About this RNA: The record gives the reactivity of an RNA of 177 nucleotides to DMS. The RNA was probed in 150 mM KOAc, 10 mM MgCl2 and 150 mM bicine (pH 8.5) at 24 C.

RNA sequence: GGGAACGACUCGAGUAGAGUCGAAAAGAUAUGGAGUCCCUGGGACAUGAGUGUAGAAUAGGACCUCGUAUCGGAAACGAUACGAGGUCCUAUUCUACAACUCAACAGCCCAGUGGACUCCUAAGUCGAUAACCAUAUACUUCGGUAUAUGGUUAUCAAAAGAAACAACAACAACAAC
Reactivity to DMS in 0.01 (KOAc 150mM, MgCl2 10mM, bicine 150mM(pH8.5), 24C), signal-to-noise 1, nucleotides 027 to 126: g000a130u010a300u000g010g000a020g010u000c000c000c000u000g020g000g000a090c070a150u000g010a020g020u020g000u000a010g010a020a010u000a010g010g010a040c000c000u000c010g010u010a000u010c000g030g020a120a080a260c020g000a000u000a010c020g030a000g040g020u000c010c000u000a010u000u010c000u000a000c000a010a010c010u010c000a020a060c280a150g010c010c010c000a000g010u030g020g000a000c000u000c010c000u010a000a060g000u030c080